[RMDB]
RNA sequence: GGGAACGACUCGAGUAGAGUCGAAAAACCGGAGGCCGACAAUCCAGGGAACCGGAUGUCAUCACGUUGUUGCAGUACCAGAUGGCAUCUUAAAUCCGAUCUGCAAAUAAGCAUGUAGAAUGCUGAUAAAAUCACACACACUUCGGUGUGUGUGAAACACCACGUGAAAGUUCGCUUUCACGUGGUGAAAAGAAACAACAACAACAAC
Reactivity to 2A3 in 0.01 (KOAc 150mM, MgCl2 10mM, bicine 150mM(pH8.5), 24C), signal-to-noise 1, nucleotides 027 to 156: a000c080c000g000g050a040g010g080c050c070g070a080c050a070a000u000c020c020a100g000g000g060a040a060c080c040g020g010a020u000g010u000c000a010u010c000a000c200g020u060u070g030u010u050g060c070a030g040u020a030c000c080a040g010a010u000g020g020c000a020u040c010u000u160a060a070a070u110c050c020g030a150u070c010u010g020c000a050a040a080u110a080a040g010c000a030u070g000u050a060g150a300a030u000g030c010u000g010a000u050a030a190a000a010u040c040a000c000a000c000a000c000a000c000u050u100c300g050g000u000g000u000g000u000g010u000g000a000a000a000
Reactivity to DMS in 0.01 (KOAc 150mM, MgCl2 10mM, bicine 150mM(pH8.5), 24C), signal-to-noise 1, nucleotides 027 to 156: a150c000c030g000g010a120g030g030c070c010g060a160c020a110a100u020c030c030a100g040g060g000a090a140c140c070g030g000a060u020g010u000c000a030u000c030a170c220g000u010u000g000u010u010g000c050a070g030u010a060c050c020a150g020a030u020g010g010c010a020u010c040u000u030a020a100a150u020c000c000g040a190u010c020u000g000c080a090a060a240u000a100a100g020c010a010u000g050u010a150g010a110a110u000g000c020u010g010a130u000a060a020a060a150u000c000a000c010a030c010a000c000a000c000u010u000c190g060g010u020g010u040g020u010g000u020g000a000a040a200